Structure probing data (DMS and 2A3) for a 207-nucleotide construct. Conditions: 150 mM KOAc, 10 mM MgCl2 and 150 mM bicine (pH 8.5), 24 C.
RNA sequence: GGGAACGACUCGAGUAGAGUCGAAAAUGGGCCGUGUGCUUAACCAGGACAAGAUCUCCUUCUCUCCAACGUUGUUGCCAACUCAUGAUUCUCGUAACCUGUGCUUGGAGAGACGUGGACCCAGAGUAAAACGAAGGGUGCUUCGGCACCCUUCGAACACUAAGUGUAACUUCGGUUACACUUAGUGAAAAGAAACAACAACAACAAC
Reactivity to DMS in 0.01 (KOAc 150mM, MgCl2 10mM, bicine 150mM(pH8.5), 24C), signal-to-noise 3, nucleotides 027 to 156: u000g010g020g010c000c020g040u000g000u000g040c080u000u000a080a140c090c050a100g020g020a190c040a100a140g010a140u000c020u000c040c040u000u000c000u000c000u000c010c000a040a110c140g020u000u010g000u000u010g000c010c070a030a110c040u010c040a090u010g010a120u000u000c040u000c080g030u000a050a060c040c030u000g020u000g000c110u000u010g020g010a040g000a020g010a030c100g030u010g000g010a060c000c010c030a300g020a170g010u000a050a060a100a190c010g000a010a030g020g030g030u000g000c020u000u000c270g030g030c000a000c000c000c000u000u000c000g000a030a080
Reactivity to 2A3 in 0.01 (KOAc 150mM, MgCl2 10mM, bicine 150mM(pH8.5), 24C), signal-to-noise 3, nucleotides 027 to 156: u020g000g040g020c030c040g070u100g020u020g100c080u070u140a090a050c040c030a060g000g060a010c070a210a090g040a190u030c020u020c040c000u030u020c010u010c000u000c010c000a030a030c120g040u060u010g000u000u000g050c030c050a070a070c060u070c130a120u130g070a130u170u020c060u040c060g040u040a030a030c010c030u120g070u090g110c050u040u000g010g010a010g010a000g000a010c020g030u090g010g040a110c020c000c000a040g010a030g050u160a020a020a020a080c010g000a000a000g000g000g000u000g010c010u010u060c130g060g000c000a000c000c000c000u000u010c000g000a010a000